[RMDB]
RNA sequence: GGGAACGACUCGAGUAGAGUCGAAAAGUUUGAUCACAGAAUUAUGUCAAUCACCACAUGUUUAGUCAGUUGUCUAGGCUUGGGGGGAAAACUGACGUGCAAAACAAUGCUGGGGAGAGUCGGGAUGUGUAAAAAGAGUAUUCGUACUCUUUUUACAAAAAGAAACAACAACAACAAC
Reactivity to 2A3 in 0.01 (KOAc 150mM, MgCl2 10mM, bicine 150mM(pH8.5), 24C), signal-to-noise 3, nucleotides 027 to 126: g020u050u060u070g040a060u110c030a020c040a090g200a200a140u240u110a100u240g060u040c020a030a040u040c020a020c050c000a020c020a060u050g040u030u070u060a020g010u010c040a020g000u050u020g030u110c030u090a040g020g080c040u060u120g020g020g000g000g030g000a040a080a000a000c030u000g010a020c010g010u020g010c010a040a060a040a020c010a070a110u060g000c060u040g030g010g000g010a070g000a000g020u030c010g030g000g000a040u120g040
Reactivity to DMS in 0.01 (KOAc 150mM, MgCl2 10mM, bicine 150mM(pH8.5), 24C), signal-to-noise 9, nucleotides 027 to 126: g010u000u000u000g010a080u000c070a080c090a120g010a120a100u000u010a070u010g010u000c050a070a110u000c040a110c020c020a050c070a050u000g000u000u000u000a080g010u000c010a060g010u000u000g010u000c030u000a080g020g010c060u000u010g020g010g010g000g020g000a040a030a030a040c040u000g010a020c040g020u000g020c170a060a050a040a040c080a070a070u000g010c120u000g010g000g000g010a070g000a090g010u000c050g010g000g010a090u010g010